[RMDB]
RNA sequence: GGGAACGACUCGAGUAGAGUCGAAAAUCUUAACAUCCGAAAAGACCUAUGGGAUGGCCCGGACGACGUCAGCAUUUACAGCCUGAGUAUCAAUCAUUCUCGCAAUGAGCUGGGCAACAAAGUCUGUCUUGUGGAAAUCCAGACCGUACCGAAUAACCGACGAUAAGUUUUUCGAAACUUAUCGUCGAAAAGAAACAACAACAACAAC
Reactivity to 2A3 in 0.01 (KOAc 150mM, MgCl2 10mM, bicine 150mM(pH8.5), 24C), signal-to-noise 1, nucleotides 027 to 156: u030c010u040u050a020a010c020a100u020c000c050g070a070a240a000a000g040a060c020c030u040a070u040g040g000g000a010u000g010g010c000c000c000g010g020a000c030g020a000c000g010u050c040a030g010c050a150u090u110u140a050c070a040g010c050c030u110g000a000g010u040a090u070c110a130a010u030c000a030u130u010c080u070c070g000c040a060a010u050g000a000g030c010u040g000g030g030c010a000a000c030a020a100a000g030u000c010u010g000u000c020u210u230g080u130g030g000a090a030a040u010c000c010a000g020a020c010c000g000u030a060c070c000g000a060a030u040a030a040c080